[RMDB]
RNA sequence: GGGAACGACUCGAGUAGAGUCGAAAACAAAUAUUUUGGGAGACAUUGAUUUUUCUCCCCGUGCUCCCCCGUUCUUUUCUGAGGAGUGCGCUGCGCCGCCCAGCCCUGUCGCCCCCCGGAGGUGAUCACCAAAUCGUUGGUUCGCCAACGAUUUGGUAAAAGAAACAACAACAACAAC
Reactivity to 2A3 in 0.01 (KOAc 150mM, MgCl2 10mM, bicine 150mM(pH8.5), 24C), signal-to-noise 1, nucleotides 027 to 126: c010a010a050a080u170a030u060u170u070u090g020g000g000a000g030a020c020a000u020u180g050a200u240u050u020u050u040c010u010c030c000c000c040g020u020g000c010u000c000c010c030c020c020g010u080u020c090u130u200u020u050c070u050g030a110g000g060a100g000u010g000c020g000c020u060g040c020g000c000c000g000c000c050c000a000g040c000c000c000u060g050u040c000g060c010c000c000c000c000c100g030g000a000g010g040u060g000a030u160c040